[RMDB]
RNA sequence: GGGAACGACUCGAGUAGAGUCGAAAAGAUAUGGAUCGACUAGCGAUGCAAAACUGCGGUCGGAAACGACCGGCAGUGAAGUAUAUCGCAUCGAUCCUAAGUCAAAAGACAGUGUUCGCACUGUCAACUGUGAUAGAAUGUUCGCAUUCUAUCACAGAAAAGAAACAACAACAACAAC
Reactivity to 2A3 in 0.01 (KOAc 150mM, MgCl2 10mM, bicine 150mM(pH8.5), 24C), signal-to-noise 5, nucleotides 027 to 126: g010a000u030a020u080g000g000a010u000c010g020a010c140u280a140g000c000g000a000u110g260c170a100a060a060a000c000u000g010c010g000g000u000c000g000g010a010a030a000c000g010a000c010c000g230g000c010a000g000u000g000a180a010g030u090a240u040a000u300c000g000c010a000u000c000g000a000u000c000c000u000a010a010g010u000c030a010a100a100a050g010a000c000a010g010u000g070u150u230c290g010c120a010c020u010g000u010c000a000a030
Reactivity to DMS in 0.01 (KOAc 150mM, MgCl2 10mM, bicine 150mM(pH8.5), 24C), signal-to-noise 5, nucleotides 027 to 126: g010a030u000a170u010g000g000a010u000c000g020a000c300u010a150g010c010g010a020u010g030c110a090a050a150a020c000u000g020c000g000g000u000c000g020g010a010a010a090c000g000a010c000c000g050g020c000a010g020u000g010a100a150g020u000a070u000a030u000c020g020c010a150u000c000g000a000u010c000c000u000a010a070g010u010c010a100a120a150a140g000a020c000a000g010u000g020u000u020c280g040c030a000c000u000g010u000c000a070a130